[RMDB]
RNA sequence: GGGAACGACUCGAGUAGAGUCGAAAAGAUAUGGAGAUUACGAAGAGGACGUCAUCUACAGGACUAUGUCGGAAACGACAUAGAGAACCUGUAGAUGACGUCUACCCACCUUCUAAUCUCCUAAGUCCACCAGACAGUACUUCGGUACUGUCUGGUGAAAAGAAACAACAACAACAAC
Reactivity to DMS in 0.01 (KOAc 150mM, MgCl2 10mM, bicine 150mM(pH8.5), 24C), signal-to-noise 1, nucleotides 027 to 126: g010a060u000a270u010g010g010a010g040a010u000u000a020c300g010a060a010g020a200g000g010a010c000g000u000c000a000u000c000u020a000c000a000g020g000a230c020u000a000u020g000u020c020g000g000a090a070a210c000g060a000c000a020u000a010g020a100g000a060a130c000c000u000g000u000a020g000a000u000g020a010c000g020u000c000u000a010c080c060c110a300c090c000u010u010c000u000a030a000u000c000u000c000c000u000a010a090g000u000c000

Chemical mapping of a 177-nucleotide RNA with DMS.
The reactions ran in a buffer of 150 mM KOAc, 10 mM MgCl2 and 150 mM bicine (pH 8.5), at 24 C.
It was measured as part of the RMDB library TTRINS.